[RMDB]
RNA sequence: GGGAACGACUCGAGUAGAGUCGAAAACGAGGGGAUCGCCCACUAAAGAGUAGAGGAAUUCUCGGAAAGCUCUCCCAAGAAGAACCAGAAUCCCUCAAGAGAGAGGAGAAUCCCCAUGACGCUGGAAAACGCAUCCAGUUCGCUGGAUGCAAAAGAAACAACAACAACAAC
Reactivity to 2A3 in 0.01 (KOAc 150mM, MgCl2 10mM, bicine 150mM(pH8.5), 24C), signal-to-noise 7, nucleotides 027 to 129: c050g020a110g000g000g000g010a020u010c020g080c010c020c000a020c030u140a100a120a040g210a050g070u270a020g010a020g000g010a040a040u010u000c020u030c090g020g000a180a070a000g010c010u000c000u040c010c030c000a000a010g060a010a000g010a020a040c010c000a000g000a000a010u020c000c000c020u010c010a060a000g090a010g020a000g000a040g030g020a030g020a030a090u030c000c010c010c000a010u080g010a010c060g010c090u090g040g040a030a070a040a030c100
Reactivity to DMS in 0.01 (KOAc 150mM, MgCl2 10mM, bicine 150mM(pH8.5), 24C), signal-to-noise 7, nucleotides 027 to 129: c090g050a130g040g000g010g060a030u000c000g030c240c010c000a140c090u000a030a090a070g030a120g050u000a170g020a040g000g000a000a000u030u020c030u030c160g030g020a070a080a100g050c030u020c050u030c110c060c110a120a120g020a150a030g020a150a110c020c020a000g030a030a000u030c030c010c010u000c050a070a040g030a100g020a080g000a120g020g030a100g020a080a050u030c000c000c000c000a040u050g000a070c200g040c070u000g010g050a050a030a040a090c250